RNA sequence: GGGAACGACUCGAGUAGAGUCGAAAAACACUCUCAGCUAUGUAUAGUUACACCUGGCUUCACUUGUGUGACUUUUGCAAUGGGAAGAGAGAGAGAAGGUCCCCUUGGUACCUCAGCUCGGCCUUAUCUUAUUGCACGACUUCGGUCGUGCAAUAAGAAAAGAAACAACAACAACAAC
Reactivity to 2A3 in 0.01 (KOAc 150mM, MgCl2 10mM, bicine 150mM(pH8.5), 24C), signal-to-noise 3, nucleotides 027 to 126: a000c050a000c000u000c000u020c010a070g050c010u000a000u090g030u010a020u030a050g020u010u010a000c000a000c010c010u040g020g090c120u210u220c100a140c130u020u080g030u000g010u010g000a000c000u050u060u050u070g000c020a070a120u130g010g050g050a170a030g050a030g000a020g000a010g010a000g010a130a070g010g050u000c050c000c010c020u030u090g050g000u040a040c020c000u030c040a040g010c030u000c010g070g050c010c030u040u020a100u060